[RMDB]
RNA sequence: GGGAACGACUCGAGUAGAGUCGAAAAGAACUCAAGUUUUAGCCACACUUUAACAUUUGUGUAAUGGUUGACACGGCCGGGAAACUCGCUGUCAUUGACGCCUUCAACGUUGAGGACGAAAGGAUUACAAGUUUUACAGUUUCGACUGUAAAACUUGAAAAGAAACAACAACAACAAC
Reactivity to 2A3 in 0.01 (KOAc 150mM, MgCl2 10mM, bicine 150mM(pH8.5), 24C), signal-to-noise 4, nucleotides 027 to 126: g030a060a040c020u010c050a020a130g020u000u020u050u090a010g000c000c000a020c000a020c020u090u060u100a100a020c050a180u080u180u150g110u010g020u040a070a120u120g050g010u020u030g010a010c010a010c060g030g010c020c030g050g000g020a030a100a010c020u020c040g040c050u050g010u020c000a040u000u100g030a020c030g030c020c000u090u050c060a060a040c050g040u020u060g060a050g010g040a000c010g030a080a010a000g080g020a000u070u100a070
Reactivity to DMS in 0.01 (KOAc 150mM, MgCl2 10mM, bicine 150mM(pH8.5), 24C), signal-to-noise 5, nucleotides 027 to 126: g020a110a110c030u010c030a090a090g010u000u000u010u000a060g000c020c020a050c070a090c030u000u010u000a060a080c100a090u010u000u010g020u000g020u010a060a060u000g000g020u010u000g000a060c090a060c070g020g000c050c050g020g010g010a070a070a100c050u000c120g030c070u000g020u000c050a070u010u010g000a070c070g010c050c020u010u000c130a070a140c100g000u000u000g000a040g000g020a060c030g020a090a090a060g000g000a120u000u000a150